Chemical mapping of a 177-nucleotide RNA with DMS and 2A3. It was measured as part of the RMDB library TTRDES. DMS adducts were read by reverse transcription with MarathonRT. For 2A3, 2,187 sequencing reads were counted. DMS (dimethyl sulfate) methylates the pairing face of unpaired adenines and cytosines. Conditions: 150 mM KOAc, 10 mM MgCl2 and 150 mM bicine (pH 8.5), 24 C.

RNA sequence: GGGAACGACUCGAGUAGAGUCGAAAAGAUAUGGAUUGGCAGGGAGCGACUUUCGGAAACGAAAGAAUCGCGCCGGUGAAAUACCUGCAAUCCUAAGUCAAAACAGACGUGCUUCGGCACGUCUGAAGAACUCAAGAGAGUUCGCUCUCUUGAGUUCAAAAGAAACAACAACAACAAC
Reactivity to DMS in 0.01 (KOAc 150mM, MgCl2 10mM, bicine 150mM(pH8.5), 24C), signal-to-noise 2, nucleotides 027 to 126: g010a000u000a030u020g000g030a040u000u000g020g040c020a010g000g010g000a020g030c000g010a050c000u000u010u000c000g020g010a020a010a040c010g000a000a010a010g020a100a100u000c010g040c000g080c300c300g000g010u010g020a150a110a120u000a120c000c000u000g000c000a020a010u000c020c000u010a010a050g000u000c000a100a080a130a300c020a010g020a010c000g050u010g000c000u000u030c290g020g010c010a000c020g010u000c000u010g010a070a100
Reactivity to 2A3 in 0.01 (KOAc 150mM, MgCl2 10mM, bicine 150mM(pH8.5), 24C), signal-to-noise 1, nucleotides 027 to 126: g000a010u030a010u080g020g000a000u010u040g300g030c020a010g000g000g070a120g050c020g030a010c020u050u000u000c010g000g000a030a010a010c020g040a000a020a040g080a090a240u040c020g000c000g000c030c050g030g090u300g120a300a140a000u130a000c010c030u040g000c020a000a000u010c000c000u000a030a010g000u000c020a000a000a000a270c010a010g000a030c010g000u000g060c000u080u110c250g120g000c000a000c000g000u020c000u000g010a000a010